Structure probing data (DMS and 2A3) for a 207-nucleotide construct. The DMS profile rests on 3,579 reads. For 2A3, 7,692 sequencing reads were counted. The reactions ran in a buffer of 150 mM KOAc, 10 mM MgCl2 and 150 mM bicine (pH 8.5), at 24 C. 2A3 adducts were read by reverse transcription with SuperScript II with manganese. For DMS the reverse transcriptase was MarathonRT.
[RMDB]
RNA sequence: GGGAACGACUCGAGUAGAGUCGAAAAGACGCCUUUAGAAGAAGAGGCUAGGGGGUAUUCCGGUGUGGGAUACUUAGUAAUAUGCAACGCUAAUUGAAUAAGAUUGUAGGACGGAAUUUACAGUCUUUAGAGAUAAGCACGUUCGCGUGCUUAUCAAGCAAUAACGUUAGUUCGCUAACGUUAUUGCAAAAGAAACAACAACAACAAC
Reactivity to DMS in 0.01 (KOAc 150mM, MgCl2 10mM, bicine 150mM(pH8.5), 24C), signal-to-noise 2, nucleotides 027 to 156: g010a150c060g000c030c000u010u000u010a110g010a160a140g000a120a140g010a050g020g010c020u000a090g050g020g020g010g020u000a030u000u000c000c000g040g040u010g000u010g040g020g020a070u000a040c060u000u010a060g010u000a050a150u000a090u000g000c050a040a060c100g000c040u000a060a120u010u000g000a120a090u010a050a040g010a050u000u020g030u000a030g040g000a180c050g010g010a100a300u000u000u000a010c020a050g010u000c000u000u000u000a090g000a140g010a030u000a000a030g000c000a000c010g010u000u010c260g040c040g050u000g020c000u000u000a000u000c010a040a170
Reactivity to 2A3 in 0.01 (KOAc 150mM, MgCl2 10mM, bicine 150mM(pH8.5), 24C), signal-to-noise 7, nucleotides 027 to 156: g050a010c060g000c020c010u070u060u090a180g030a270a010g020a060a010g000a050g020g000c030u040a070g050g010g000g000g000u030a030u030u040c030c040g120g060u210g040u180g070g020g000a010u010a040c000u030u020a030g020u060a040a120u080a080u300g080c070a090a040c090g010c070u070a050a110u150u120g060a050a090u100a060a010g020a030u000u010g010u010a010g040g060a020c080g020g040a050a030u090u050u040a020c010a000g000u000c000u020u030u070a100g030a010g000a040u000a000a000g000c000a000c010g000u020u040c160g010c010g070u000g000c000u000u000a000u000c000a000a010